[RMDB]
RNA sequence: GGGAACGACUCGAGUAGAGUCGAAAACAACGCCGUACCGGUCGCGUAAGCGAUCGUCAGGUGAUGCUCACGCGCGGCAUCGCGGAUCACUUGUAGCCGCAUCUUGAUCGCGGCGACCUCCUCGGCCGUGAUGCACUCGGUUCGCCGAGUGCAUCACAAAAGAAACAACAACAACAAC
Reactivity to DMS in 0.01 (KOAc 150mM, MgCl2 10mM, bicine 150mM(pH8.5), 24C), signal-to-noise 1, nucleotides 027 to 126: c120a040a140c120g030c010c010g000u010a110c300c080g020g040u000c040g010c000g010u010a180a170g000c000g010a010u000c000g000u000c170a120g020g020u010g040a040u010g000c030u000c130a160c050g000c010g000c080g000g020c090a100u010c030g010c000g000g010a090u000c080a210c030u000u010g010u000a070g010c020c040g020c000a070u010c040u010u000g000a030u000c120g010c010g020g000c000g000a020c050c090u010c040c040u010c040g020g010c050c040
Reactivity to 2A3 in 0.01 (KOAc 150mM, MgCl2 10mM, bicine 150mM(pH8.5), 24C), signal-to-noise 2, nucleotides 027 to 126: c010a040a030c040g000c020c030g030u030a070c050c050g000g020u010c010g000c010g070u110a040a110g000c020g000a000u010c020g030u020c030a000g000g060u040g000a010u040g020c020u030c020a170c060g090c000g000c020g100g000c060a070u110c050g010c000g010g060a150u090c080a050c170u090u160g070u200a010g010c010c000g020c010a040u040c020u070u140g050a040u060c060g010c000g030g000c010g000a000c000c010u030c000c000u010c000g020g000c000c000
This 177-nucleotide RNA was probed chemically with DMS and 2A3. Values cover nucleotides 27 to 126.